RNA sequence: GGGAACGACUCGAGUAGAGUCGAAAAGCGUCAUUCGUGACGCCACGCGGGGUCCAAUGAUGGCCAUGGGAGCUUGGACCUACACUGAAGCCUCCACGGUGUAGCUAGCUCCCUGGCUUGAGGACGGAGGCACCCAGGAGCGCCUGUUCGCAGGCAAUCAACCGCAUAGAUUCGUCUAUGCGGUUGAAAAAGAAACAACAACAACAAC
Reactivity to DMS in 0.01 (KOAc 150mM, MgCl2 10mM, bicine 150mM(pH8.5), 24C), signal-to-noise 2, nucleotides 027 to 156: g030c000g020u000c010a110u010u010c270g030u020g000a010c010g000c000c020a020c080g010c080g030g020g020g100u010c010c050a170a250u000g000a130u000g000g010c000c010a000u000g060g050g030a030g050c030u010u000g030g000a040c300c000u000a000c010a020c010u000g000a010a080g020c020c010u000c010c000a300c040g030g010u000g020u000a010g020c020u000a000g020c000u000c000c000c000u000g000g000c010u000u010g010a060g050g050a090c030g010g030a040g070g020c030a140c010c030c000a290g000g000a200g010c050g040c010c020u000g000u010u000c180g030c020a050g010g010c030a110a190
Reactivity to 2A3 in 0.01 (KOAc 150mM, MgCl2 10mM, bicine 150mM(pH8.5), 24C), signal-to-noise 4, nucleotides 027 to 156: g000c000g010u010c010a020u060u170c200g160u050g010a000c010g030c020c010a070c080g190c090g000g030g040g000u000c010c010a030a150u010g010a000u000g020g040c040c060a170u230g000g010g000a050g040c140u300u300g120g000a010c010c000u000a000c000a000c000u050g050a180a020g010c000c000u000c000c000a020c000g000g000u000g000u000a010g000c020u010a000g000c000u010c030c000c000u000g000g000c000u000u000g000a010g000g000a000c000g000g000a000g000g000c010a010c010c000c000a060g030g110a140g060c120g010c000c010u040g040u080u090c280g010c130a000g000g000c000a020a060
Notes:
This 207-nucleotide RNA was probed chemically with DMS and 2A3. The DMS profile rests on 3,220 reads. The data come from the RNA Mapping Database (RMDB), library RNAMAK.